[RMDB]
RNA sequence: GGGAACGACUCGAGUAGAGUCGAAAAGGCAGCACUUACCAAGUCUGGGGGCCGAUGAGGGUUGGCUCAAAGUAGGGUUUUGACUUGAAAACUCAAGCUGUGACCCCAAAACGAUGGAGGUAAAUGAAAAAUCCAUCUGCCUUCGGGCAGAUGGAAAGAUACUACCUGAGUUCGCUCAGGUAGUAUCAAAAGAAACAACAACAACAAC
Reactivity to DMS in 0.01 (KOAc 150mM, MgCl2 10mM, bicine 150mM(pH8.5), 24C), signal-to-noise 2, nucleotides 027 to 156: g040g010c060a070g010c010a100c040u000u000a030c050c040a050a260g020u000c070u000g050g000g050g040g050c100c060g050a080u000g000a150g010g010g000u000u000g000g020c060u010c010a070a090a160g010u000a070g000g030g010u000u000u000u010g000a070c040u000u000g020a070a120a120a090c150u000c000a030a060g000c010u010g020u000g020a090c010c010c000c010a060a020a080a060c080g000a080u000g000g020a140g000g000u000a030a070a100u010g000a040a090a050a140a140u000c000c010a020u000c000u000g010c000c010u010u000c300g000g030g000c000a000g000a010u010g000g000a020a010a040
Reactivity to 2A3 in 0.01 (KOAc 150mM, MgCl2 10mM, bicine 150mM(pH8.5), 24C), signal-to-noise 4, nucleotides 027 to 156: g070g000c020a020g000c000a050c060u070u070a070c050c030a100a030g030u020c040u130g030g000g000g000g040c010c050g060a030u100g060a070g040g040g020u050u060g020g000c020u030c040a050a070a010g070u090a060g020g040g020u020u060u110u110g030a070c000u010u030g030a050a040a120a120c050u020c030a030a000g000c020u040g050u090g080a080c000c000c020c010a020a100a030a020c070g030a040u100g060g020a030g050g010u060a060a070a070u140g100a040a060a030a000a020u010c000c000a000u010c000u000g000c010c000u030u030c140g000g000g000c000a000g000a000u010g000g000a000a000a000